[RMDB]
RNA sequence: GGGAACGACUCGAGUAGAGUCGAAAAUGGAAAUGGCCGCGUCAUAAGCUGCCGUGCGCGAAAAGGCCUUGGCGGCAAGCUUUUUGCGGAAGGCAAGCGGCAGGGAGCCGGAAUGCUUUUCCAGUUAGAGGGUAUUUAAUUUCGAUUAAAUACCCUCAAAAGAAACAACAACAACAAC
Reactivity to DMS in 0.01 (KOAc 150mM, MgCl2 10mM, bicine 150mM(pH8.5), 24C), signal-to-noise 6, nucleotides 027 to 126: u010g020g000a030a050a070u000g010g020c000c020g020c080g010u010c120a070u010a070a170g010c020u000g020c000c000g020u010g010c080g020c020g000a040a040a080a100g000g000c040c080u000u000g010g010c120g010g010c010a060a070g000c020u000u000u000u000u000g010c030g010g010a080a080g000g010c060a070a180g010c010g010g010c030a070g010g010g010a170g010c020c010g000g000a090a130u000g000c050u000u000u000u000c010c020a080g010u010u010a140
Reactivity to 2A3 in 0.01 (KOAc 150mM, MgCl2 10mM, bicine 150mM(pH8.5), 24C), signal-to-noise 3, nucleotides 027 to 126: u040g020g020a000a020a050u070g060g000c000c010g020c030g010u050c070a080u040a230a000g020c020u010g010c020c020g020u070g000c050g000c010g070a140a040a030a040g110g000c050c030u070u140g150g060c050g000g030c030a020a030g000c000u030u050u040u070u140g020c030g030g040a030a040g070g000c050a060a050g030c000g010g020c000a010g060g080g030a040g010c030c030g030g040a140a040u100g020c010u070u030u050u000c010c000a020g070u110u050a040
Description
The record gives the reactivity of an RNA of 177 nucleotides to DMS and 2A3. It was measured as part of the RMDB library OK2TST. The 2A3 profile rests on 4,354 reads. The RNA was probed in 150 mM KOAc, 10 mM MgCl2 and 150 mM bicine (pH 8.5) at 24 C.